[RMDB]
RNA sequence: GGGAACGACUCGAGUAGAGUCGAAAAAACAAAGGAGACAUCCCGGGAAGUCACAAAACCAAGUCUAGGUUCAGGUAGAGACUUUUAAAACAGUGCAGAUCCCCAGACCUUACCUUUUUUGAUCCUGGUAAGUUAAGUACUUCGGUACUUAACUUACAAAAGAAACAACAACAACAAC
Reactivity to DMS in 0.01 (KOAc 150mM, MgCl2 10mM, bicine 150mM(pH8.5), 24C), signal-to-noise 2, nucleotides 027 to 126: a060a050c080a060a100a050g000g030a110g000a110c110a070u010c010c030c170g000g010g000a070a050g010u000c050a070c090a090a110a040a040c060c030a050a090g000u000c050u000a080g010g000u000u030c060a060g010g010u000a080g010a060g010a020c020u000u000u000u000a040a080a130a040c170a020g040u000g030c020a060g000a060u000c030c000c020c040a110g000a090c040c030u000u010a030c040c000u000u000u000u000u000u060g010a110u010c040c020u000g020
Reactivity to 2A3 in 0.01 (KOAc 150mM, MgCl2 10mM, bicine 150mM(pH8.5), 24C), signal-to-noise 1, nucleotides 027 to 126: a000a000c050a010a050a030g060g030a090g020a070c000a010u040c000c050c010g000g020g000a040a030g010u100c030a030c030a150a110a040a020c040c020a070a010g060u020c050u100a020g020g050u080u060c060a010g020g120u100a040g080a030g010a050c000u000u090u040u070a080a180a030a010c030a030g050u040g040c020a020g060a230u100c000c030c020c010a000g020a030c000c000u000u070a080c020c000u010u070u070u020u040u140g020a030u080c010c000u010g000